[RMDB]
RNA sequence: GGGAACGACUCGAGUAGAGUCGAAAAAAGUAGGCCGCCGGGGACACUCACCUUAGCCCGCGCGCUCCGAAUUUUAUGUAGUGUUGAUGUCGCACGCUUUAGAGGGGUGGGCUGUGUUGAACGGCUCGUGCAAAGGUAAGUUCGCUUACCUUUGCACAAAAGAAACAACAACAACAAC
Reactivity to 2A3 in 0.01 (KOAc 150mM, MgCl2 10mM, bicine 150mM(pH8.5), 24C), signal-to-noise 2, nucleotides 027 to 126: a000a000g070u060a020g090g000c000c000g100c070c000g000g000g000g000a010c030a010c010u050c010a140c010c000u050u050a000g060c020c000c000g000c000g000c000g080c000u050c010c000g010a070a070u030u070u140u030a240u170g170u160a050g040u070g110u090u040g080a110u180g040u090c030g000c000a000c020g030c000u050u060u000a130g020a070g010g020g000g000u090g000g020g000c040u080g030u020g000u030u090g020a050a040c020g010g000c030u010c050
Reactivity to DMS in 0.01 (KOAc 150mM, MgCl2 10mM, bicine 150mM(pH8.5), 24C), signal-to-noise 2, nucleotides 027 to 126: a050a170g000u010a170g030g010c300c060g000c020c020g000g000g000g000a090c030a120c050u010c020a060c040c040u010u000a160g010c030c010c030g020c060g020c090g030c030u000c010c000g000a040a050u040u010u020u020a060u050g000u010a050g010u000g000u030u020g000a080u000g030u030c030g000c010a020c030g000c060u010u020u000a070g030a100g000g030g000g010u000g020g010g020c020u010g030u000g000u050u020g000a110a110c030g000g060c010u010c050
Chemical mapping of a 177-nucleotide RNA with 2A3 and DMS. Values are in units of 0.01, from 0 to 300, in steps of 10. DMS adducts were read by reverse transcription with MarathonRT. The DMS profile rests on 2,830 reads. It was measured as part of the RMDB library RFM100.